[RMDB]
RNA sequence: GGGAACGACUCGAGUAGAGUCGAAAAGUUCAUGUGUUCGCACAUGAACAAAAGACGGAGAGAAAAGCACCAUGGACUCAUCCGUCGAAAACCAAAGGUGCAAAAGUGGGGGGUUCGCCCCCCACAACUCUCAUACGAAGUUCGCUUCGUAUGAGAGAAAAGAAACAACAACAACAAC
Reactivity to DMS in 0.01 (KOAc 150mM, MgCl2 10mM, bicine 150mM(pH8.5), 24C), signal-to-noise 2, nucleotides 027 to 126: g000u000u010c010a010u020g000u010g040u000u010c190g020c010a010c000a000u020g010a000a000c010a080a040a130a120g000a010c020g000g030a030g020a030g000a170a150a130a160g010c010a000c000c010a150u010g000g020a150c020u010c010a120u000c000c030g010u000c000g010a010a040a100a140c030c010a090a050a130g000g000u000g010c020a120a060a050a200g020u000g000g030g000g010g020g010u020u020c270g000c000c000c000c010c000c010a000c010a010a030
Reactivity to 2A3 in 0.01 (KOAc 150mM, MgCl2 10mM, bicine 150mM(pH8.5), 24C), signal-to-noise 1, nucleotides 027 to 126: g000u010u000c000a030u000g020u010g030u030u080c170g070c100a000c000a000u000g000a000a000c000a000a050a000a050g000a000c020g030g010a020g000a010g030a000a110a040a000g020c000a000c010c040a070u100g130g060a070c020u000c010a280u000c110c010g000u010c000g000a050a050a010a010c010c000a070a030a050g050g000u020g010c000a000a020a100a130g020u030g000g000g010g000g000g000u000u000c030g090c000c020c000c000c000c000a000c000a000a010

The record gives the reactivity of an RNA of 177 nucleotides to DMS and 2A3. Reactivities are rounded to 0.1 and cut off at 0 and 3. The reactions ran in a buffer of 150 mM KOAc, 10 mM MgCl2 and 150 mM bicine (pH 8.5), at 24 C. For DMS the reverse transcriptase was MarathonRT.